[RMDB]
The record gives the reactivity of an RNA of 177 nucleotides to DMS and 2A3.
DMS adducts were read by reverse transcription with MarathonRT.
For DMS, 46,967 sequencing reads were counted.
For 2A3, 129,568 sequencing reads were counted.
Reactivities are given for positions 27 through 126.
For 2A3 the reverse transcriptase was SuperScript II with manganese.
RNA sequence: GGGAACGACUCGAGUAGAGUCGAAAAGAAUAGUCAGUAAUUGGGUUGACUCGCAUGAGAAUGUGAGUCAAAUGAAAGACUGACUACGAUUUGUAUCUUCAUUACCCAAUUACACUAAGAUACAAAAGGUAGUGUUACAUUUCGAUGUGACGCUACCAAAAGAAACAACAACAACAAC
Reactivity to DMS in 0.01 (KOAc 150mM, MgCl2 10mM, bicine 150mM(pH8.5), 24C), signal-to-noise 9, nucleotides 027 to 126: g020a150a150u000a000g000u000c000a000g020u000a030a080u020u000g010g010g010u000u000g000a010c000u000c000g000c000a000u000g000a230g010a180a010u000g010u010g000a010g010u000c000a010a010a040u020g010a110a100a230g000a020c010u000g000a010c010u000a020c160g000a170u010u010u000g000u000a010u000c010u000u000c210a120u010u010a120c000c000c010a060a060u030u040a110c230a100c150u020a000a010g000a010u000a000c010a010a020a090a130
Reactivity to 2A3 in 0.01 (KOAc 150mM, MgCl2 10mM, bicine 150mM(pH8.5), 24C), signal-to-noise 9, nucleotides 027 to 126: g090a070a070u050a020g010u020c030a000g010u030a060a070u050u060g130g040g000u020u020g000a000c000u000c000g000c000a000u030g040a030g070a250a020u000g010u000g000a000g000u000c000a000a000a010u060g030a020a020a020g080a010c010u010g010a010c000u020a030c050g120a090u020u010u060g010u010a010u000c000u040u030c050a090u040u130a120c000c000c000a010a020u100u080a040c090a010c080u070a020a010g000a020u020a020c000a000a040a000a000